[RMDB]
RNA sequence: GGGAACGACUCGAGUAGAGUCGAAAAGCACAUCAAUUUCGGCAGACAGUUUAGAGCAUUCUUUUUUGAUUUGCUGCUGCAAACGUUCACGCUCGCUUUCAACCGCAGGUUUCACAUCUUUUUCGAGCAGUGUUAAACUCUGACGUAUUGCAUUGCAACGAGAAAUUGUAUUCGUACAAUUUCUCGUAAAAGAAACAACAACAACAAC
Reactivity to 2A3 in 0.01 (KOAc 150mM, MgCl2 10mM, bicine 150mM(pH8.5), 24C), signal-to-noise 9, nucleotides 027 to 156: g030c010a030c010a090u080c060a080a130u080u160u150c030g040g010c020a020g030a120c030a030g020u030u100u170a080g030a020g020c020a060u090u060c050u050u210u160u100u100u130g100a140u060u060u080g010c010u010g010c010u020g020c000a050a050a040c050g050u070u070c050a020c070g010c010u040c030g030c050u050u110u130c050a060a040c040c040g030c070a040g020g060u020u130u110c070a050c010a100u120c040u050u150u060u130u120c040g030a020g020c070a040g010u010g000u050u070a050a050a020c050u050c050u160g030a060c020g010u040a120u070u070g000c040a010u020u090g000c010a020
Reactivity to DMS in 0.01 (KOAc 150mM, MgCl2 10mM, bicine 150mM(pH8.5), 24C), signal-to-noise 2, nucleotides 027 to 156: g010c040a050c070a110u010c080a060a140u000u000u010c050g010g000c030a080g000a130c080a100g030u000u000u000a120g020a070g030c000a060u000u000c030u000u010u000u000u000u000g010a140u010u010u000g030c020u000g000c000u000g050c040a040a050a070c070g010u010u000c030a050c070g030c000u000c030g020c060u000u000u010c060a080a100c060c060g010c080a110g000g010u000u010u010c060a050c040a100u030c010u000u000u000u000u020c080g000a090g020c040a080g060u010g020u000u000a040a070a060c040u000c020u000g010a120c040g040u000a100u000u000g010c010a130u000u000g010c000a190